[RMDB]
RNA sequence: GGGAACGACUCGAGUAGAGUCGAAAAAAGGAGACAACGUACUAGCAACAUCCGUUCAAAAAUCGAAGGAGAAUGGUCAGAUCGCUUCACACAAGACGGCAGCAGACCUGCAGGAUGCCACCAACGCCAAUUCCUGCUGAUUCGUCAGCAGGAAUUGAAAAGAAACAACAACAACAAC
Reactivity to 2A3 in 0.01 (KOAc 150mM, MgCl2 10mM, bicine 150mM(pH8.5), 24C), signal-to-noise 2, nucleotides 027 to 126: a000a000g130g000a030g020a040c070a060a020c030g070u080a060c040u060a020g070c010a000a020c010a060u000c020c020g070u070u080c070a010a080a070a060a100u120c080g070a050a010g020g030a040g090a090a080u110g070g000u030c030a010g000a150u070c040g030c070u020u030c040a030c000a000c010a040a120g030a030c000g020g040c010a010g030c000a000g020a040c000c020u000g000c010a010g050g050a010u070g060c000c030a020c000c040a080a020c030g000c040
Reactivity to DMS in 0.01 (KOAc 150mM, MgCl2 10mM, bicine 150mM(pH8.5), 24C), signal-to-noise 3, nucleotides 027 to 126: a050a020g030g000a070g030a090c050a030a070c110g000u010a110c060u000a070g010c040a060a090c060a080u000c050c020g000u010u000c080a030a070a070a080a050u020c090g010a120a060g000g000a120g000a070a030u000g020g000u010c070a070g030a070u010c070g000c010u000u000c070a050c210a070c110a030a070g010a030c060g000g020c050a040g010c060a040g040a030c040c020u000g000c090a040g000g000a030u000g010c000c060a040c090c030a050a060c170g010c170